RNA sequence: GGGAACGACUCGAGUAGAGUCGAAAACACAACACGAACUCACUGUGUGGUUGAGAAGAUGAGGUCUAUGACGGCACCGCAAUGCAUUGAGGAUAUUGUAGGAGUAAGGCUCCAUGGCAGAACAGCAGUAGUUGCAAGUAUUCGUACUUGCAACUACAAAAGAAACAACAACAACAAC
Reactivity to DMS in 0.01 (KOAc 150mM, MgCl2 10mM, bicine 150mM(pH8.5), 24C), signal-to-noise 4, nucleotides 027 to 126: c030a090c080a060a070c060a060c110g010a060a090c060u010c100a060c090u010g010u010g040u000g000g010u000u000g010a080g000a080a070g020a060u000g010a050g000g000u000c050u000a080u010g020a100c110g000g000c050a050c020c050g000c080a060a030u000g000c110a090u010u020g010a080g020g010a060u000a040u010u000g030u010a080g010g010a070g020u000a080a090g020g010c040u000c010c020a050u010g010g010c030a030g000a060a040c130a060g010c100a110
Reactivity to 2A3 in 0.01 (KOAc 150mM, MgCl2 10mM, bicine 150mM(pH8.5), 24C), signal-to-noise 3, nucleotides 027 to 126: c050a000c020a000a170c050a030c070g060a130a030c030u020c050a040c000u030g000u000g030u040g110g070u050u100g030a060g040a110a030g040a090u070g000a020g000g050u000c040u060a100u170g050a040c050g010g010c000a010c020c020g020c050a050a050u070g030c030a030u060u100g040a030g060g040a070u030a020u140u080g060u040a090g000g030a020g020u060a080a070g090g000c010u030c010c000a010u020g050g010c010a010g030a130a060c020a010g070c030a030